[RMDB]
RNA sequence: GGGAACGACUCGAGUAGAGUCGAAAAACGGUCGUACGCGACCGAGGCGCGGCUAGGUCGACGGACCGAACAAUGGCAUCCCGCAUUCUGCCAUCCGCCGCGCAGCUUCCUCUCAAACGGUGCGGAAAAAAGUAGGACACCUUCGGGUGUCCUACAAGUCUUGCUUAUCGUUCGCGAUAAGCAAGACAAAAGAAACAACAACAACAAC
Reactivity to 2A3 in 0.01 (KOAc 150mM, MgCl2 10mM, bicine 150mM(pH8.5), 24C), signal-to-noise 2, nucleotides 027 to 156: a020c020g000g000u010c010g020u060a040c230g020c010g110a000c010c000g010a040g000g000c010g010c010g000g000c000u000a000g000g000u030c040g100a190c250g150g020a000c000c000g000a000a000c000a010a010u010g010g000c000a020u110c010c020c000g000c000a030u300u130c030u040g000c000c000a000u010c010c030g010c000c000g030c000g000c010a000g000c020u020u000c010c000u100c030u060c050a040a080a050c060g030g000u010g000c020g000g000a030a020a020a020a020a020g010u010a000g000g010a000c010a000c010c030u020u130c200g080g000g000u000g000u000c000c000u000a000c000a000a000
An RNA of 207 nucleotides, treated with 2A3 and read out base by base. The RNA was probed in 150 mM KOAc, 10 mM MgCl2 and 150 mM bicine (pH 8.5) at 24 C. Values cover nucleotides 27 to 156.